[RMDB]
RNA sequence: GGGAACGACUCGAGUAGAGUCGAAAAGUGAAGGUACGCUCGAGCGUGGUCAUUGAGGACAAGUCGACGAGAGAUCCCGAGUACGUCUACAGUCAGCCUUACGGUAAGCUUGUGCGCUCGGAAGAAGCUUCUACCGACGGUUCGCCGUCGGUAGAAGAAAAGAAACAACAACAACAAC
Reactivity to DMS in 0.01 (KOAc 150mM, MgCl2 10mM, bicine 150mM(pH8.5), 24C), signal-to-noise 2, nucleotides 027 to 126: g030u000g000a040a080g000g060u020a030c080g000c010u000c010g000a110g000c010g020u020g000g040u030c020a150u060u050g020a210g010g000a000c060a110a100g000u030c010g050a050c050g000a090g020a160g020a120u000c010c020c010g010a100g020u020a020c150g020u020c050u000a030c070a040g020u010c130a200g000c070c050u040u050a150c150g010g040u000a140a140g000c030u000u000g030u030g010c020g000c020u000c010g000g000a020a150g000a080a050g040
Reactivity to 2A3 in 0.01 (KOAc 150mM, MgCl2 10mM, bicine 150mM(pH8.5), 24C), signal-to-noise 3, nucleotides 027 to 126: g140u170g070a060a010g090g040u100a070c020g000c010u030c030g040a070g050c060g020u060g090g000u040c070a130u070u170g100a140g080g030a000c020a000a130g030u020c000g010a000c030g030a050g000a040g020a140u040c050c040c000g000a020g000u080a120c100g020u000c050u050a040c030a060g030u060c040a040g130c040c000u170u130a010c010g010g020u060a160a050g010c040u050u070g000u020g000c000g000c020u010c000g010g000a070a050g010a000a000g020